[RMDB]
RNA sequence: GGGAACGACUCGAGUAGAGUCGAAAACUCGCGCGAACAUAGAGGCGUGGAGCGCGACAUGAAUCAGCCUCGAUUAGAUUAAUGGUCGACAGAUCAGCGGCGAUCAGCGACCCAAUUAGAAGCCGCGACCGGAAGAGGAGACGCUCGACGGACGUCACAUCCGGUAAUGAUUCGUCAUUACCGGAUGAAAAGAAACAACAACAACAAC
Reactivity to DMS in 0.01 (KOAc 150mM, MgCl2 10mM, bicine 150mM(pH8.5), 24C), signal-to-noise 2, nucleotides 027 to 156: c040u000c000g010c020g050c040g000a120a080c060a120u000a130g040a070g010g010c010g020u010g020g030a240g000c020g040c010g010a100c110a060u020g020a130a140u000c050a080g020c030c010u010c010g000a160u000u000a120g000a210u010u010a090a150u020g010g000u010c020g010a120c090a120g010a120u000c030a110g020c110g000g000c010g000a030u000c020a180g000c050g000a000c000c000c050a060a080u000u000a150g040a090a050g020c030c030g010c060g000a120c020c000g020g010a110a070g010a200g010g000a130g000a050c050g020c000u000c020g030a060c100g010g000a040c020g020u010c010a210
Reactivity to 2A3 in 0.01 (KOAc 150mM, MgCl2 10mM, bicine 150mM(pH8.5), 24C), signal-to-noise 5, nucleotides 027 to 156: c000u010c000g000c000g000c010g070a250a050c020a050u110a080g020a040g020g020c020g020u040g020g020a040g000c010g000c000g010a040c040a160u240g070a090a090u150c060a060g000c020c010u000c020g030a120u090u160a050g030a070u050u190a050a090u180g000g000u010c030g030a110c080a060g020a020u020c020a050g000c020g040g000c010g010a030u000c020a010g040c000g010a020c010c000c000a010a060u110u110a040g060a210a010g000c000c000g000c010g010a020c000c020g030g020a070a040g020a070g090g030a070g030a020c050g030c030u030c030g060a040c020g040g000a020c020g030u020c030a010